The data come from the RNA Mapping Database (RMDB), library M2RFOK. Structure probing data (2A3 and DMS) for a 207-nucleotide construct. Conditions: 150 mM KOAc, 10 mM MgCl2 and 150 mM bicine (pH 8.5), 24 C.
[RMDB]
RNA sequence: GGGAACGACUCGAGUAGAGUCGAAAAAUCAGAGGGCGCUAUCAUGCAAACUAGGAUUGUCUGCUCAUGCACAGAACCAACUACCGAUAACUAACAGUGCAUGAAGGUGAGUUAUUCCAUAUUAAUUAAAACUCGUAAUUCUUCGGAAUUACGAGAACAUUCUAUCACACUUCGGUGUGAUAGAAUGAAAAGAAACAACAACAACAAC
Reactivity to 2A3 in 0.01 (KOAc 150mM, MgCl2 10mM, bicine 150mM(pH8.5), 24C), signal-to-noise 6, nucleotides 027 to 156: a000u050c020a010g030a030g040g020g010c050g000c030u040a090u230c060a040u160g010c020a030a000a050c040u050a010g030g030a040u020u080g020u040c030u030g040c010u000c010a000u010g000c010a010c000a020g080a130a080c070c020a080a070c040u140a100c060c050g150a160u070a150a060c040u020a030a020c050a060g000u010g000c000a000u000g020a010a020g030g010u070g020a020g020u070u060a050u080u020c010c010a020u070a050u150u200a130a090u080u130a060a040a030a080c000u000c000g000u000a000a000u000u010c000u020u040c120g070g000a000a000u000u000a000c000g000a000g000a000a000
Reactivity to DMS in 0.01 (KOAc 150mM, MgCl2 10mM, bicine 150mM(pH8.5), 24C), signal-to-noise 3, nucleotides 027 to 156: a110u000c040a100g000a140g010g010g050c150g010c040u010a080u010c090a080u000g010c020a060a100a150c050u010a110g040g010a120u000u000g030u000c010u010g010c040u010c020a040u010g000c020a050c010a080g000a050a110c050c040a060a080c080u000a300c030c040g000a150u000a040a100c060u000a070a100c040a110g010u000g010c010a070u000g010a080a180g010g000u000g010a090g010u000u000a150u000u000c020c010a160u000a120u010u000a070a120u000u000a040a060a090a150c000u000c000g030u000a010a010u000u000c010u010u000c300g050g000a020a000u010u000a000c010g000a000g000a020a060